[RMDB]
RNA sequence: GGGAACGACUCGAGUAGAGUCGAAAACACUGACAGAUGAGCGUAAGCGGUACCUAGUAAGCUACGUACAUGUUAGGAGAAGCGAUGGCGGGAUAGGGCUACCUGAUGAGAAUGGUCAUGUAUAUGACCUGCACUCGUGGUUCGCCACGAGUGCAGGAAAAGAAACAACAACAACAAC
Reactivity to 2A3 in 0.01 (KOAc 150mM, MgCl2 10mM, bicine 150mM(pH8.5), 24C), signal-to-noise 1, nucleotides 027 to 126: c010a000c010u020g060a010c040a030g300a180u050g020a070g080c000g000u000a220a040g010c000g110g070u050a070c020c090u120a070g060u130a010a090g080c000u020a010c000g000u040a080c000a030u070g010u040u060a000g010g040a120g040a060a070g000c000g150a100u080g000g020c040g000g000g000a020u060a120g000g020g040c010u070a030c000c000u060g020a080u110g090a120g120a100a060u060g000g000u000c000a040u020g000u120a060u010a030u300g000a020
Reactivity to DMS in 0.01 (KOAc 150mM, MgCl2 10mM, bicine 150mM(pH8.5), 24C), signal-to-noise 1, nucleotides 027 to 126: c070a150c040u000g000a050c010a020g000a130u000g010a300g020c000g000u020a070a120g040c060g000g010u000a020c080c100u000a070g000u020a110a210g000c010u020a020c100g030u000a070c040a060u010g020u000u000a040g010g000a100g000a140a110g000c100g010a100u010g000g020c090g010g040g000a100u010a070g020g020g000c050u000a040c050c010u000g020a110u000g000a060g020a070a080u010g020g000u000c000a010u000g000u000a060u010a030u000g000a080
About this RNA: Chemical mapping of a 177-nucleotide RNA with 2A3 and DMS. Reactivities are given for positions 27 through 126. DMS adducts were read by reverse transcription with MarathonRT. For 2A3, 851 sequencing reads were counted.